RNA sequence: GGGAACGACUCGAGUAGAGUCGAAAAGAUUAAGUGGGAGCGUCGCCCUUUCGGUGCAUCGGAUAUUAAUUAGCCAGUGCGUGGCAUUACGCAUAUUGAUGUCUACUUUGGCGUAGACUGUGCCAAUUUAAGGAUUGCUGGGCAAUCCAGCCCUAGACACUCCGUAAUCAUUCGUGAUUACGGAGUGAAAAGAAACAACAACAACAAC
Reactivity to 2A3 in 0.01 (KOAc 150mM, MgCl2 10mM, bicine 150mM(pH8.5), 24C), signal-to-noise 3, nucleotides 027 to 156: g040a030u200u200a100a040g050u150g020g030g000a070g000c030g010u020c020g040c000c010c010u040u100u080c080g000g000u060g000c020a030u060c070g060g000a020u010a040u130u180a180a100u080u130a030g020c000c020a000g000u010g010c010g020u030g050g000c050a040u060u090a040c020g010c020a000u040a110u090u110g150a100u060g010u000c000u020a060c000u130u050u140g090g000c070g010u000a030g030a100c040u020g020u040g080c010c010a020a050u030u140u100a070a050g020g010a030u020u140g010c020u050g020g050g020c060a010a010u070c020c010a010g020c010c000c020u000a040g010a010
Reactivity to DMS in 0.01 (KOAc 150mM, MgCl2 10mM, bicine 150mM(pH8.5), 24C), signal-to-noise 1, nucleotides 027 to 156: g010a130u000u010a050a070g020u000g010g010g000a080g000c040g040u010c060g010c010c050c020u050u000u000c080g060g020u020g020c040a060u000c030g000g060a110u010a070u000u000a050a130u000u010a110g020c000c010a130g050u000g030c010g020u010g000g030c070a050u020u010a050c020g000c030a110u000a070u010u000g000a070u000g010u000c000u000a020c030u000u010u000g030g010c170g010u030a080g010a030c010u000g010u020g000c030c010a020a090u010u020u000a090a120g010g000a140u000u010g040c010u000g010g040g010c000a100a080u020c070c100a060g000c040c050c000u000a080g000a300